[RMDB]
This 177-nucleotide RNA was probed chemically with DMS and 2A3. The data come from the RNA Mapping Database (RMDB), libraries RFM100 and RFMREP. For DMS the reverse transcriptase was MarathonRT.
RNA sequence: GGGAACGACUCGAGUAGAGUCGAAAACCCCAGGGCAGUAUUUCCCAAUUAUCCCUUCCUGUCAUCAUCACCUUCUUGUCCGUGCUCAUCAGCAUCUCAGACAAGUUACUAUGCUGGGAAAAUCAGGUUAGUUGAUUAUGUUCGCAUAAUCAACUAAAAAAGAAACAACAACAACAAC
Reactivity to DMS in 0.01 (KOAc 150mM, MgCl2 10mM, bicine 150mM(pH8.5), 24C), signal-to-noise 9, nucleotides 027 to 126: c060c010c010c110a080g000g000g010c070a040g010u000a040u010u000u000c000c010c010a100a110u030u020a100u000c030c020c010u000u000c030c020u010g020u000c040a060u000c070a060u010c070a070c070c050u000u000c020u000u010g010u010c010c080g010u000g000c040u000c140a110u010c100a070g000c040a070u000c050u000c100a070g010a080c060a070a070g000u010u020a090c120u010a080u010g010c040u000g000g010g000a040a060a070a100u020c120a070g010g010
Reactivity to 2A3 in 0.01 (KOAc 150mM, MgCl2 10mM, bicine 150mM(pH8.5), 24C), signal-to-noise 9, nucleotides 027 to 126: c020c000c000c010a030g010g010g010c020a010g040u050a090u030u050u020c000c000c000a030a060u160u080a070u090c020c010c000u040u040c010c020u030g040u040c010a040u010c000a020u040c010a060c020c010u050u040c010u030u060g020u000c020c010g030u030g010c000u010c040a220u030c010a060g020c010a050u010c040u010c030a030g040a150c020a050a020g010u030u020a080c070u060a040u100g010c020u010g000g030g040a030a040a020a070u130c060a040g120g000